An RNA of 207 nucleotides, treated with 2A3 and read out base by base. Reactivities are given for positions 27 through 156. It was measured as part of the RMDB library M2RFPK.

RNA sequence: GGGAACGACUCGAGUAGAGUCGAAAAUUCCAUUUGAGUAUCCUGAAAACGGGCUUUUCAGCAUGGAACGUACAUAUUAAAUAGUAGGAGUGCGUAGUGGCCCGUAUAGCAGGCAUUAACAUUCCUGAAAACGUGAAAAGGUUCGCCUUUUCACGAACUCCGUUUUCUAGUUCGCUAGAAAACGGAGAAAAGAAACAACAACAACAAC
Reactivity to 2A3 in 0.01 (KOAc 150mM, MgCl2 10mM, bicine 150mM(pH8.5), 24C), signal-to-noise 1, nucleotides 027 to 156: u020u030c000c000a020u150u100u030g010a010g010u020a020u080c010c010u050g080a080a040a000a040c000g000g040g000c020u140u120u190u100c050a010g000c020a010u040g010g020a200a000c010g060u010a020c010a050u220a090u160u300a110a130a240u260a160g050u000a000g170g000a100g000u000g000c070g000u070a020g170u150g010g000c000c000c000g000u010a010u050a000g020c000a000g010g020c000a000u010u010a020a020c010a010u170u150c060c060u060g090a130a130a000a000c000g000u000g020a000a000a000a000g020g000u040u050c110g160c010c060u000u000u000u000c000a000c000g010a000a000